RNA sequence: GGGAACGACUCGAGUAGAGUCGAAAAAUCUUUAAGCACAUGGCAGGUUCACCCCGUACGGUGCGGAAGUUCGCGCUUCCGUGAAACGCGAAAAUCGGACGGUGGCUGCAAGUCGCAUCGCAAAACCUAUAGCUUGUUAGGUUCGCCUAACAAGCAAACACAGUAUGUAGUUCGCUACAUACUGUGUAAAAGAAACAACAACAACAAC
Reactivity to 2A3 in 0.01 (KOAc 150mM, MgCl2 10mM, bicine 150mM(pH8.5), 24C), signal-to-noise 7, nucleotides 027 to 156: a000u090c060u030u150u070a150a030g010c020a020c010a120u140g090g000c010a010g040g030u160u130c030a050c000c000c000c010g010u060a030c040g000g040u050g000c000g000g000a010a010g030u130u210c100g020c050g000c120u010u000c010c000g020u020g070a140a100a010c140g030c020g120a080a010a020a100u090c010g010g010a020c060g020g020u040g040g000c010u010g000c020a020a020g020u020c070g010c060a070u070c050g040c120a030a030a070a120c010c020u100a070u080a190g000c000u000u000g010u000u000a000g010g000u030u040c150g090c030c000u010a000a000c000a010a000g000c000a000a000
Reactivity to DMS in 0.01 (KOAc 150mM, MgCl2 10mM, bicine 150mM(pH8.5), 24C), signal-to-noise 2, nucleotides 027 to 156: a070u000c070u000u000u000a070a120g000c020a050c080a130u000g010g000c010a070g000g020u000u000c070a150c110c000c010c010g030u000a040c000g030g050u000g000c000g000g000a080a080g020u010u000c180g040c280g000c010u000u000c020c190g040u000g020a040a020a030c050g000c030g010a060a070a080a050u000c020g000g010a010c030g010g030u000g050g020c040u000g020c060a080a090g010u000c010g000c050a070u000c060g010c060a060a070a050a090c040c000u000a190u000a140g000c010u000u000g010u000u000a020g020g010u000u000c300g040c000c000u010a010a030c000a020a000g040c000a020a040

An RNA of 207 nucleotides, treated with 2A3 and DMS and read out base by base. For 2A3, 7,278 sequencing reads were counted. Conditions: 150 mM KOAc, 10 mM MgCl2 and 150 mM bicine (pH 8.5), 24 C. For DMS, 4,794 sequencing reads were counted.